[RMDB]
RNA sequence: GGGAACGACUCGAGUAGAGUCGAAAAAGAGACUGGGGGGAAGAAAAGCCGAAAUGGAUUCACGGUGCUUGGGAUAGAGGACGAGAAGGGGAACUGCUAGCUCCUUCAACUCGUUCUGUCCGGUGAGGAUGUCACUAGCCUUCGGGCUAGUGACAUCAAAAGAAACAACAACAACAAC
Reactivity to DMS in 0.01 (KOAc 150mM, MgCl2 10mM, bicine 150mM(pH8.5), 24C), signal-to-noise 1, nucleotides 027 to 126: a030g000a220g000a020c030u010g000g000g000g000g000g000a070a030g030a230a000a020a060g000c050c000g000a090a050a080u020g010g000a150u010u000c070a060c120g000g000u020g000c050u000u010g020g010g000a000u040a010g050a030g010g000a020c020g000a260g020a040a190g010g000g010g000a040a070c040u020g030c150u010a090g000c080u030c000c000u000u040c020a040a240c300u000c000g000u000u000c000u010g000u000c000c000g000g040u010g000a110g000
Reactivity to 2A3 in 0.01 (KOAc 150mM, MgCl2 10mM, bicine 150mM(pH8.5), 24C), signal-to-noise 1, nucleotides 027 to 126: a000g070a000g000a000c000u020g000g000g000g020g020g000a010a010g120a020a050a000a000g000c000c000g020a070a070a070u150g010g030a030u000u040c030a000c060g030g020u060g050c100u070u150g020g000g010a000u060a010g150a010g130g000a010c000g000a000g060a080a000g080g000g020g050a080a070c010u080g030c090u170a080g030c000u000c070c000u080u050c010a000a150c000u000c000g030u010u010c000u000g030u000c010c000g000g110u100g000a040g070